[RMDB]
An RNA of 207 nucleotides, treated with 2A3 and read out base by base. Conditions: 150 mM KOAc, 10 mM MgCl2 and 150 mM bicine (pH 8.5), 24 C. 2A3 adducts were read by reverse transcription with SuperScript II with manganese.
RNA sequence: GGGAACGACUCGAGUAGAGUCGAAAACGGCAAAAAAGCAAACUUGACCACCAAGGAUAAAAGAGAUCUUAUCCAAGGAUGCAAAAGAUAAUCUCACUUUUGACACCCACUGCUCUCGAACUUAAAGAAAACCGAGACUACUUCGGUAGUCUCGGAAGGUUACUAACCUGUUCGCAGGUUAGUAACCAAAAGAAACAACAACAACAAC
Reactivity to 2A3 in 0.01 (KOAc 150mM, MgCl2 10mM, bicine 150mM(pH8.5), 24C), signal-to-noise 3, nucleotides 027 to 156: c020g040g000c050a020a030a030a050a050a030g070c050a140a130a060c040u050u080g040a070c020c010a020c020c000a040a060g040g000a010u030a040a040a020a010g140a010g010a050u070c040u050u050a010u000c010c000a020a030g000g010a060u040g000c000a000a030a080a050g040a090u110a110a110u140c040u030c050a040c030u000u020u020u080g060a040c000a020c040c000c000a050c090u070g020c000u010c010u000c020g040a090a080c070u090u150a180a060a060g060a030a100a080a050c000c000g000a000g000a000c000u000a000c000u000u040c070g050g000u010a000g000u000c000u010c000g000g000a000a000